[RMDB]
RNA sequence: GGGAACGACUCGAGUAGAGUCGAAAAAGUUGCAGCGUGGGGAAACGAGAUGGGGAGAUGGCCAGAGAGCGAGACGGAGCAAGGAGACCCACAGCUUUAGCCUAGGCCAAAUUAAUCGAUAAAAAGAGGUAAUACGACUCUUCGGAGUCGUAUUACCAAAAGAAACAACAACAACAAC
Reactivity to 2A3 in 0.01 (KOAc 150mM, MgCl2 10mM, bicine 150mM(pH8.5), 24C), signal-to-noise 1, nucleotides 027 to 126: a020g140u120u100g000c040a020g000c070g040u050g070g040g000g000a000a000a090c000g040a000g000a020u000g000g000g030g000a050g030a000u140g000g000c030c000a020g030a020g000a000g060c000g040a040g020a070c030g000g020a160g000c120a240a170g070g000a070g050a090c010c010c010a030c030a030g000c000u000u110u050a030g040c000c040u000a000g000g030c000c000a040a000a000u120u090a050a010u060c160g030a030u110a090a120a000a000a000g090a000
Reactivity to DMS in 0.01 (KOAc 150mM, MgCl2 10mM, bicine 150mM(pH8.5), 24C), signal-to-noise 1, nucleotides 027 to 126: a170g050u030u020g000c090a060g040c080g000u000g020g000g030g000a050a070a100c090g000a080g000a100u000g000g000g050g000a040g010a100u090g010g000c010c080a040g120a070g000a130g000c020g000a180g000a110c050g040g000a080g020c080a130a080g000g000a040g000a090c110c000c010a060c050a170g090c060u000u000u000a070g000c040c000u000a120g000g050c000c000a020a040a030u030u000a000a020u020c050g040a070u020a030a070a150a060a020g000a300